[RMDB]
RNA sequence: GGGAACGACUCGAGUAGAGUCGAAAAUAUACCAAAUCACGUGAACAUCGCUCUGCUAAGUCCCGUCGUUCUUCCAGUCAGAGCGAGAUUGUAAGCAACCUUAUGCGCAAUGAAGACAUAGAGGGACAGAUGCACCUGUUUUCGAACAGGUGCAUCUAAAAGAAACAACAACAACAAC
Reactivity to 2A3 in 0.01 (KOAc 150mM, MgCl2 10mM, bicine 150mM(pH8.5), 24C), signal-to-noise 2, nucleotides 027 to 126: u150a000u020a090c000c020a000a110a040u300c090a050c180g160u110g130a130a000c110a070u000c030g000c000u000c000u000g030c000u000a020a030g030u000c010c080c070g070u000c000g000u080u010c010u290u000c040c000a030g040u090c000a000g000a000g000c040g000a000g050a000u060u090g000u040a000a000g000c000a020a040c030c040u040u090a060u100g000c070g000c000a000a060u220g040a090a000g000a050c010a010u000a000g180a000g120g040g010a000c000
Reactivity to DMS in 0.01 (KOAc 150mM, MgCl2 10mM, bicine 150mM(pH8.5), 24C), signal-to-noise 1, nucleotides 027 to 126: u050a020u050a300c000c020a050a100a060u020c150a020c040g000u000g000a120a190c130a230u000c000g000c000u020c000u000g000c080u000a030a160g000u000c030c050c100g000u050c000g000u000u000c000u000u000c050c050a200g000u030c000a000g000a020g000c000g000a080g000a000u000u010g000u000a030a190g000c020a130a050c070c090u000u000a000u040g000c180g020c100a070a080u050g000a000a050g000a090c070a120u000a080g000a000g000g060g010a080c140